[RMDB]
RNA sequence: GGGAACGACUCGAGUAGAGUCGAAAAUACUGUAGAGCAUCAGACAUGCUAGUGCACGUGGUACGUACGUAUCAUGCUAGCUAGGAUCGAGAUGAUCGUACACGUACGCUAGCUAGUGCACUAGCCAGACGACGCGAACUUUCGAGUUCGCGUCGUCAAAAGAAACAACAACAACAAC
Reactivity to DMS in 0.01 (KOAc 150mM, MgCl2 10mM, bicine 150mM(pH8.5), 24C), signal-to-noise 1, nucleotides 027 to 126: u010a120c010u000g030u030a030g010a110g000c040a040u000c030a100g040a190c260a080u000g000c000u000a000g020u000g000c000a030c070g010u040g010g010u000a000c000g010u000a060c120g080u020a000u000c070a140u000g000c030u000a080g000c070u010a050g010g020a030u010c000g020a200g000a120u050g010a050u000c000g000u010a060c150a180c120g000u000a060c210g020c110u000a010g000c000u000a040g010u010g020c000a010c000u000a050g010c020c290a010
Reactivity to 2A3 in 0.01 (KOAc 150mM, MgCl2 10mM, bicine 150mM(pH8.5), 24C), signal-to-noise 1, nucleotides 027 to 126: u090a020c030u010g030u080a040g000a020g180c040a060u100c050a060g090a120c060a070u210g000c000u000a010g010u000g000c000a000c050g010u070g030g020u010a000c010g060u030a020c120g000u040a020u060c010a010u070g000c020u000a000g130c020u010a050g040g080a040u000c060g050a050g000a260u300g050a030u080c010g000u080a040c100a000c070g130u130a030c080g000c020u000a020g030c000u010a040g000u000g030c000a000c000u010a020g000c000c010a020
This 177-nucleotide RNA was probed chemically with DMS and 2A3. 2A3 adducts were read by reverse transcription with SuperScript II with manganese. Values cover nucleotides 27 to 126. For 2A3, 1,017 sequencing reads were counted. It was measured as part of the RMDB library OK2TRN.